[RMDB]
RNA sequence: GGGAACGACUCGAGUAGAGUCGAAAACUGUUUAAGCGAAUAAAUGCUCAGAAAGGCGUUUUGUUUCAAGAGGAUCAGAUUUUGGACUGGUUUGUACAGAUAUGUUUGGCCCUGAAACAUGUACAUGGAAUGGAGCAAGAUUCGUCUUGCUCCAUUCAAAAGAAACAACAACAACAAC
Reactivity to DMS in 0.01 (KOAc 150mM, MgCl2 10mM, bicine 150mM(pH8.5), 24C), signal-to-noise 3, nucleotides 027 to 126: c060u000g010u000u010u020a070a100g000c070g010a100a050u010a070a070a040u010g010c010u000c060a130g010a060a110a160g010g010c060g020u010u000u000u010g000u010u010u010c020a070a110g010a130g010g000a040u000c050a010g000a160u020u000u010u000g010g000a090c040u000g010g000u010u000u020g020u000a050c020a080g000a120u000a060u000g000u000u000u010g020g010c030c010c020u010g010a040a020a020c040a020u010g000u010a030c090a080u020g020